RNA sequence: GGGAACGACUCGAGUAGAGUCGAAAAUGGCUGGUGUUUGGCCUGUGCUGGAAGGUACUGGAGAAAAACGGCGUUGCCGUACGUCACUUCGGCAUGCCGGAACAGCAGACCAGCCACUGGCGUCGGCCGAUUGAAACGCUUUCGAGCGUUUCAAUCGAAAAGAAACAACAACAACAAC
Reactivity to 2A3 in 0.01 (KOAc 150mM, MgCl2 10mM, bicine 150mM(pH8.5), 24C), signal-to-noise 1, nucleotides 027 to 126: u030g060g000c020u010g010g060u060g030u110u170u040g060g000c000c040u010g040u060g000c010u050g000g150a040a080g070g010u140a090c010u110g000g020a090g160a090a050a030a000a050c040g020g000c100g030u050u110g000c020c010g010u090a040c060g050u060c130a070c160u070u030c010g000g040c000a030u010g010c010c010g030g000a090a020c010a020g020c010a010g070a070c010c000a000g000c000c000a020c040u030g050g040c010g060u140c090g080g030c000
Reactivity to DMS in 0.01 (KOAc 150mM, MgCl2 10mM, bicine 150mM(pH8.5), 24C), signal-to-noise 2, nucleotides 027 to 126: u000g010g020c000u010g030g020u010g020u000u010u000g030g020c030c020u000g000u000g030c030u000g020g050a150a120g010g000u000a060c030u010g010g000a140g020a080a080a060a100a150c010g000g010c000g010u010u020g010c010c000g050u000a020c240g020u050c210a120c210u010u000c010g010g000c010a060u000g000c010c000g000g000a060a100c090a100g000c070a110g000a090c010c000a010g000c020c000a020c080u000g000g020c050g000u000c010g000g010c070